[RMDB]
RNA sequence: GGGAACGACUCGAGUAGAGUCGAAAAGAGAGGGUAACCACCGGCGCGCGUCACUGAUAUAUCCCCCGGGGGGUAAGGGGAGAAAAGGAUACAGCGCGACGAAGUUAGCACGCUGCCCCGUAAGGCUUGAAGAGUGUAGUGUUCGCACUACACUCAACAUUUCUUCUCAGUUCGCUGAGAAGAAAUGAAAAGAAACAACAACAACAAC
Reactivity to 2A3 in 0.01 (KOAc 150mM, MgCl2 10mM, bicine 150mM(pH8.5), 24C), signal-to-noise 3, nucleotides 027 to 156: g120a000g020a050g030g020g070u050a040a040c030c020a050c070c000g010g010c010g000c000g000c020g010u020c030a030c070u020g030a060u080a030u020a060u300c000c010c000c010c040g010g000g010g000g000g010u060a060a070g040g010g000g000a010g030a020a040a000a000g020g000a010u040a110c040a020g000c010g000c000g010a000c000g000a060a010g040u060u080a040g050c060a020c120g030c040u050g050c000c010c000c000g000u030a040a080g050g030c060u090u090g080a140a100g010a070g000u000g000u010a000g000u020g020u050u070c160g050c040a000c000u000a000c000a000c000u010c000a000a000
Reactivity to DMS in 0.01 (KOAc 150mM, MgCl2 10mM, bicine 150mM(pH8.5), 24C), signal-to-noise 2, nucleotides 027 to 156: g000a110g000a090g030g000g000u000a040a060c030c010a100c150c000g020g050c030g040c010g010c020g010u000c110a180c020u000g010a120u000a140u000a170u000c000c000c020c020c070g000g000g030g040g040g030u010a070a020g010g010g040g010a090g000a100a070a210a080g000g000a210u000a060c060a110g040c000g060c010g010a030c030g010a070a100g000u010u000a130g030c050a010c010g000c010u010g000c000c000c010c040g010u000a070a160g010g000c060u000u000g000a120a200g010a040g020u000g020u000a010g030u000g030u000u000c290g020c020a010c010u020a000c000a000c000u000c000a000a160
The record gives the reactivity of an RNA of 207 nucleotides to 2A3 and DMS. It was measured as part of the RMDB library M2RFPK. The RNA was probed in 150 mM KOAc, 10 mM MgCl2 and 150 mM bicine (pH 8.5) at 24 C. 2A3 adducts were read by reverse transcription with SuperScript II with manganese. DMS adducts were read by reverse transcription with MarathonRT.